[RMDB]
RNA sequence: GGGAACGACUCGAGUAGAGUCGAAAAAAGAAGAAUGUGACACGAACGCCAGAGUCCUCAGAUGAAUGCCCUGGCUGUAAUGAGCAGUAGGCACUGUCACAUGGCCACCCAUGGAGGGCCUGUGGCCACGUCCGUAAGCUUUCGAGCUUACGGACGUAAAAGAAACAACAACAACAAC
Reactivity to DMS in 0.01 (KOAc 150mM, MgCl2 10mM, bicine 150mM(pH8.5), 24C), signal-to-noise 2, nucleotides 027 to 126: a040a120g000a090a050g000a090a070u000g020u000g010a010c020a050c120g030a110a080c160g020c020c020a020g000a100g010u010c090c000u000c010a110g010a100u000g000a070a060u000g000c020c030c050u000g010g010c020u000g020u010a080a120u000g010a130g000c050a070g020u000a080g010g010c010a060c160u010g020u000c000a070c010a020u000g020g020c040c050a060c030c030c040a090u010g000g020a120g020g010g000c060c060u000g000u000g010g020c000c150
Reactivity to 2A3 in 0.01 (KOAc 150mM, MgCl2 10mM, bicine 150mM(pH8.5), 24C), signal-to-noise 2, nucleotides 027 to 126: a000a000g150a000a020g080a030a010u080g020u000g010a000c000a000c130g120a190a010c060g020c020c020a030g000a020g040u040c000c000u040c000a030g020a210u150g090a190a050u110g060c000c020c000u040g070g000c020u030g010u050a140a140u210g080a020g040c000a020g000u190a060g010g060c020a000c090u040g000u030c000a030c000a000u020g010g000c020c000a010c020c040c040a090u090g100g030a080g010g020g000c030c020u020g030u010g010g000c000c020
The record gives the reactivity of an RNA of 177 nucleotides to DMS and 2A3.
For DMS the reverse transcriptase was MarathonRT.
2A3 adducts were read by reverse transcription with SuperScript II with manganese.
Values cover nucleotides 27 to 126.
The data come from the RNA Mapping Database (RMDB), library OK2TST.